[RMDB]
RNA sequence: GGGAACGACUCGAGUAGAGUCGAAAAAUGAAUGCCAGCAGGCACCCCUCCUUUCCUGGGGUAAAGGUUUUCAGAUGCUGCAUCUUCUAAAUUGAGCCUCCGGUCAUACUAGUUUUGUGCUUGGAACCCAAUAGAAUAAGUUCGCUUAUUCUAUUGGAAAAGAAACAACAACAACAAC
Reactivity to DMS in 0.01 (KOAc 150mM, MgCl2 10mM, bicine 150mM(pH8.5), 24C), signal-to-noise 7, nucleotides 027 to 126: a080u000g010a120a070u000g010c030c010a100g020c160a100g020g010c040a080c020c030c010c010u000c020c030u010u000u000c020c020u000g010g000g010g010u000a030a080a110g000g010u000u000u000u000c070a060g000a080u000g010c100u000g020c040a050u000c030u000u000c040u000a030a060a080u010u000g000a270g000c020c020u000c030c030g010g000u000c050a040u010a070c080u000a060g010u000u000u000u010g010u000g000c050u000u000g010g010a100a140c160
Reactivity to 2A3 in 0.01 (KOAc 150mM, MgCl2 10mM, bicine 150mM(pH8.5), 24C), signal-to-noise 4, nucleotides 027 to 126: a000u120g030a070a030u060g020c020c010a030g110c040a060g180g010c030a030c020c010c000c000u010c010c000u030u020u040c020c020u050g000g050g000g000u050a060a060a010g050g000u050u040u060u080c050a040g030a080u060g050c070u050g020c050a030u010c010u130u000c030u080a120a190a170u080u100g030a040g030c020c010u000c010c020g050g010u020c000a020u040a130c040u020a080g080u070u080u130u210g060u040g040c020u040u050g040g010a040a020c010